[RMDB]
An RNA of 177 nucleotides, treated with 2A3 and DMS and read out base by base.
The 2A3 profile rests on 1,564 reads.
Source: RMDB library OK2TRN, as collected in RNAgym.
For 2A3 the reverse transcriptase was SuperScript II with manganese.
Conditions: 150 mM KOAc, 10 mM MgCl2 and 150 mM bicine (pH 8.5), 24 C.
RNA sequence: GGGAACGACUCGAGUAGAGUCGAAAAUGCUCAACAAAACAGAGCCGAAGUCUAUGUGGCUCCCUGCCAGCAUACUUGUAGGGAACAAAAUGCUGGAAUUAUAGACAUUGAAGAGGAAUUGAAAAUAACAACGUAGGUGUUUCGACACCUACGUUGUAAAAGAAACAACAACAACAAC
Reactivity to 2A3 in 0.01 (KOAc 150mM, MgCl2 10mM, bicine 150mM(pH8.5), 24C), signal-to-noise 2, nucleotides 027 to 126: u080g010c010u010c020a040a010c030a070a260a030a020c070a060g000a000g000c020c010g130a100a000g020u020c010u020a010u010g090u080g080g000c020u030c060c000c000u020g020c010c000a010g000c000a040u040a160c040u050u020g010u040a090g040g140g140a000a000c010a010a010a010a010u010g010c010u000g010g070a000a000u080u010a030u000a000g000a000c040a030u040u240g060a100a030g070a050g150g100a080a070u160u070g050a110a090a020a020u120a030
Reactivity to DMS in 0.01 (KOAc 150mM, MgCl2 10mM, bicine 150mM(pH8.5), 24C), signal-to-noise 2, nucleotides 027 to 126: u020g010c030u000c030a100a140c110a030a110a090a090c230a110g020a020g040c000c120g000a210a110g020u000c030u000a010u000g000u000g020g050c060u000c020c050c040u020g010c010c000a010g000c000a000u000a080c190u010u000g000u000a180g040g000g050a120a070c010a030a020a090a010u000g020c010u000g020g000a110a040u000u010a060u000a030g010a000c000a160u000u000g000a130a040g010a110g030g010a120a120u000u020g020a060a060a060a110u010a070